[RMDB]
The record gives the reactivity of an RNA of 207 nucleotides to DMS and 2A3. The 2A3 profile rests on 884 reads. 2A3 adducts were read by reverse transcription with SuperScript II with manganese.

RNA sequence: GGGAACGACUCGAGUAGAGUCGAAAAAGUUUAAAAUGACAAUGACAGAGGCGCGUGACCGAACGUGCCUGCCGGACGUCCUGGCGCAACUGCCGCAGCCGGGUUUGCGAAGGAUGCGGGUUUUACUUAGUCUCGCUGAGCCUGUUCCGGAGCAGCGUAAGUAAUGGUCUUUCGAGACCAUUACUUAAAAAGAAACAACAACAACAAC
Reactivity to DMS in 0.01 (KOAc 150mM, MgCl2 10mM, bicine 150mM(pH8.5), 24C), signal-to-noise 2, nucleotides 027 to 156: a080g020u010u000u000a060a060a060a100u000g010a110c050a110a140u010g000a100c040a100g020a070g030g020c000g000c010g000u010g010a220c200c110g020a060a090c040g000u000g000c000c010u000g010c020c000g020g010a180c030g000u000c000c050u010g000g020c060g020c030a050a020c100u000g040c020c050g020c050a200g000c130c040g000g020g010u000u010u020g030c050g010a190a130g020g020a080u000g020c010g020g000g010u000u010u010u000a070c070u020u000a120g000u000c030u000c000g000c020u000g000a070g000c030c020u000g020u000u000c070c030g020g020a150g010c040a020g000c060g030
Reactivity to 2A3 in 0.01 (KOAc 150mM, MgCl2 10mM, bicine 150mM(pH8.5), 24C), signal-to-noise 2, nucleotides 027 to 156: a000g050u070u140u090a050a090a100a100u160g010a040c060a090a070u100g020a030c030a040g110a040g030g010c000g010c000g000u020g020a190c060c070g020a130a000c000g030u040g000c000c000u000g030c000c000g160g040a100c000g020u000c000c020u010g050g040c000g010c000a030a040c040u140g050c050c100g100c080a020g150c110c010g050g000g000u030u060u080g020c020g000a030a000g000g000a000u020g010c030g000g010g090u020u140u070u030a010c010u040u100a050g020u000c010u010c120g000c020u010g050a030g070c000c020u080g000u120u020c010c010g000g030a000g030c010a000g000c000g050